[RMDB]
Record summary
The data come from the RNA Mapping Database (RMDB), library OK1LIB. The record gives the reactivity of an RNA of 177 nucleotides to 2A3. The RNA was probed in 150 mM KOAc, 10 mM MgCl2 and 150 mM bicine (pH 8.5) at 24 C. For 2A3, 351 sequencing reads were counted.

RNA sequence: GGGAACGACUCGAGUAGAGUCGAAAAAUGGAGGGAUUACUCUUUUUUGCAAUUCUAUAUUGGUCCCUAAGACUCUUCUUCAUGAGAUAAUCCUCAAAAUUACAAAUGAUCUGGUACAUGAUUGUGGGAUCCUCCACGUUUUCGAACGUGGAGGAUCAAAAGAAACAACAACAACAAC
Reactivity to 2A3 in 0.01 (KOAc 150mM, MgCl2 10mM, bicine 150mM(pH8.5), 24C), signal-to-noise 1, nucleotides 027 to 126: a000u040g040g000a120g000g010g050a020u130u300a000c000u150c000u200u000u000u000u090u110g130c060a030a000u150u000c170u100a190u030a100u040u060g010g010u030c000c010c010u000a130a000g050a000c000u010c000u080u030c000u230u000c050a030u130g000a000g000a000u100a000a050u100c060c050u170c050a000a280a000a000u090u050a060c000a040a040a000u000g090a100u030c000u090g090g060u220a030c060a100u150g000a000u120u170g000u080g000g030